Notes
An RNA of 177 nucleotides, treated with 2A3 and read out base by base. The RNA was probed in 150 mM KOAc, 10 mM MgCl2 and 150 mM bicine (pH 8.5) at 24 C.

RNA sequence: GGGAACGACUCGAGUAGAGUCGAAAAGAAAGUGUGCACUUGAUACCGCGUGACUUCGGUCACGUAGUGGCACCGCGCAGGACUUUGCUGCCACUACUUAGUCCUGAGGUAUCUUGUGCUCACGAAACCGUCCACCUGGGUUCGCCCAGGUGGACGGAAAAGAAACAACAACAACAAC
Reactivity to 2A3 in 0.01 (KOAc 150mM, MgCl2 10mM, bicine 150mM(pH8.5), 24C), signal-to-noise 1, nucleotides 027 to 126: g150a020a200a040g000u000g000u040g000c000a000c000u000u000g020a040u000a000c000c000g090c000g060u050g000a040c040u070u130c290g140g000u000c000a000c020g010u000a000g000u000g140g060c030a020c110c110g050c020g020c030a050g000g100a130c040u120u130u150g090c110u050g040c020c000a040c020u010a000c010u010u100a020g000u010c000c020u010g000a000g000g000u000a000u000c000u060u000g000u000g010c000u000c000a000c010g010a030a000a000